[RMDB]
An RNA of 170 nucleotides, treated with DMS and 2A3 and read out base by base. The 2A3 profile rests on 17,762 reads. It was measured as part of the RMDB library 15KLIB. Reactivities are given for positions 27 through 129. 2A3 adducts were read by reverse transcription with SuperScript II with manganese. The reactions ran in a buffer of 150 mM KOAc, 10 mM MgCl2 and 150 mM bicine (pH 8.5), at 24 C.
RNA sequence: GGGAACGACUCGAGUAGAGUCGAAAAGGGAUAGGAGUAAGACCAUAGCGAUGGGGGGAGAUGCUAGGAGUUGGGGGAGACCGAAGCGAGGAGGAAAGUAAAGAAAGCAACGGGGCUAGCCGUCAGGACACACAUUCGUUCGCGAAUGUGAAAAGAAACAACAACAACAAC
Reactivity to DMS in 0.01 (KOAc 150mM, MgCl2 10mM, bicine 150mM(pH8.5), 24C), signal-to-noise 6, nucleotides 027 to 129: g060g000g000a030u050a070g000g040a050g030u040a050a040g020a000c050c070a140u020a090g030c070g040a080u060g010g000g000g000g000g000a060g040a030u020g030c110u050a060g020g050a050g030u070u000g000g000g000g000g000a100g040a040c070c040g020a100a030g010c160g030a040g020g020a050g000g000a030a030a040g040u000a040a000a060g000a050a050a050g020c140a080a100c160g030g000g010g040c090u040a130g000c000c030g000u050c090a050g020g030a020c200a090
Reactivity to 2A3 in 0.01 (KOAc 150mM, MgCl2 10mM, bicine 150mM(pH8.5), 24C), signal-to-noise 7, nucleotides 027 to 129: g070g010g010a050u130a070g020g010a010g050u090a080a050g020a040c020c020a080u110a010g110c090g050a090u080g000g000g000g010g030g000a040g000a020u090g030c040u030a030g010g030a060g020u100u080g010g000g010g000g010a010g010a000c000c000g010a010a000g040c030g010a010g010g010a000g010g010a040a030a000g050u120a020a020a020g040a040a050a000g020c030a040a050c040g010g000g040g010c000u040a030g040c010c010g040u050c020a030g000g060a030c020a010